Structure probing data (DMS) for a 177-nucleotide construct. DMS adducts were read by reverse transcription with MarathonRT. Source: RMDB library OK2TST, as collected in RNAgym.
[RMDB]
RNA sequence: GGGAACGACUCGAGUAGAGUCGAAAACACAACAUCAAAGAUGUUGUUGAACAGGUUCACAACAAGGCAUAGGAAACCCACUUAUGAGAAGGACGUAGAUCUUGGGGCAGGAACGAGAAGUGUCUCCGUCUCUGGAUUUCUUCGGAAAUCCAGAGACAAAAGAAACAACAACAACAAC
Reactivity to DMS in 0.01 (KOAc 150mM, MgCl2 10mM, bicine 150mM(pH8.5), 24C), signal-to-noise 2, nucleotides 027 to 126: c070a060c020a020a000c020a010u000c050a170a200a160g030a030u000g000u000u010g010u010u000g000a070a080c140a020g000g020u050u000c060a040c060a050a090c140a040a030g000g030c050a050u000a100g010g000a050a080a110c070c060c030a110c110u040u000a060u000g000a000g000a080a030g010g000a070c060g030u000a080g000a030u010c030u010u000g000g010g000g000c000a070g000g000a010a060c050g010a080g000a060a080g000u010g010u000c030u010c030c220